Structure probing data (2A3 and DMS) for a 177-nucleotide construct.
Values cover nucleotides 27 to 126.
The data come from the RNA Mapping Database (RMDB), library OK1LIB.
The DMS profile rests on 2,430 reads.
Values are in units of 0.01, from 0 to 300, in steps of 10.

[RMDB]
RNA sequence: GGGAACGACUCGAGUAGAGUCGAAAAGGCUCGGGCUACGGCGGCAACGCGUUGCUGGGCAAGAAGUGCUACUCACUGCGUAUCGCGUCGGCGAUGGCCCACGAUGAGGGCUGGCUGGCCGAGCACAAUGCGACAAAACAUUCGUGUUUUGUCGCAUAAAAGAAACAACAACAACAAC
Reactivity to 2A3 in 0.01 (KOAc 150mM, MgCl2 10mM, bicine 150mM(pH8.5), 24C), signal-to-noise 4, nucleotides 027 to 126: g120g000c010u010c020g000g050g070c070u160a060c020g040g050c020g000g000c030a100a140c040g070c010g060u010u020g030c160u010g030g010g030c020a010a010g080a040a010g020u080g010c080u140a130c030u050c080a020c020u040g020c030g070u080a000u050c010g000c090g130u160c110g200g010c010g020a020u010g040g000c000c000c010a010c030g020a030u100g030a090g090g030g000c010u050g090g060c000u000g060g040c000c010g000a000g000c010a000c020a010
Reactivity to DMS in 0.01 (KOAc 150mM, MgCl2 10mM, bicine 150mM(pH8.5), 24C), signal-to-noise 2, nucleotides 027 to 126: g010g010c010u000c000g000g010g010c080u010a120c200g000g020c010g000g000c000a050a040c030g030c030g000u010u000g000c200u000g000g010g010c000a160a050g060a100a050g000u000g000c300u040a090c210u050c010a040c030u000g020c080g010u020a020u000c010g010c010g040u060c170g000g030c010g000a030u010g000g000c000c000c000a050c040g000a050u000g000a100g000g010g020c000u000g000g020c000u000g000g000c000c000g010a000g000c010a130c080a120